[RMDB]
An RNA of 177 nucleotides, treated with DMS and 2A3 and read out base by base. DMS adducts were read by reverse transcription with MarathonRT.
RNA sequence: GGGAACGACUCGAGUAGAGUCGAAAAUAAGUGACGCAAGCUGUAUGGUAAGUGACGCAAGCUGAAAGAAGAGCGCUGAACAGCAGAAAAAAUACCGAUAGAAACAAUCUGCGUCCGAUGACCCCUACCUACCACCCUGUUUCGACAGGGUGGUAGGAAAAGAAACAACAACAACAAC
Reactivity to DMS in 0.01 (KOAc 150mM, MgCl2 10mM, bicine 150mM(pH8.5), 24C), signal-to-noise 1, nucleotides 027 to 126: u090a050a020g000u010g020a000c010g020c000a000a010g000c080u010g020u000a110u000g060g000u020a060a020g000u000g050a220c060g000c070a010a030g010c040u000g040a050a080a000g050a200a070g000a130g000c140g000c000u000g000a050a160c070a000g000c050a030g030a000a010a000a270a260a050u020a050c000c000g020a120u010a080g000a060a100a100c120a060a080u000c070u020g040c030g000u060c030c060g000a140u020g000a110c030c020c000c100u000a160
Reactivity to 2A3 in 0.01 (KOAc 150mM, MgCl2 10mM, bicine 150mM(pH8.5), 24C), signal-to-noise 2, nucleotides 027 to 126: u100a100a040g060u060g140a000c000g000c000a000a020g010c020u000g010u140a130u100g120g030u060a010a050g070u040g100a020c050g030c010a120a170g080c020u030g130a080a210a040g140a130a010g080a020g080c130g030c110u030g050a000a010c010a000g070c050a020g120a020a060a000a000a000a110u080a030c000c000g060a010u080a050g150a030a180a000c060a010a120u070c010u010g000c000g000u020c000c000g000a000u090g000a010c000c000c000c000u010a030
The reactions ran in a buffer of 150 mM KOAc, 10 mM MgCl2 and 150 mM bicine (pH 8.5), at 24 C.
High DMS reactivity at an A or C suggests that its Watson-Crick edge is free.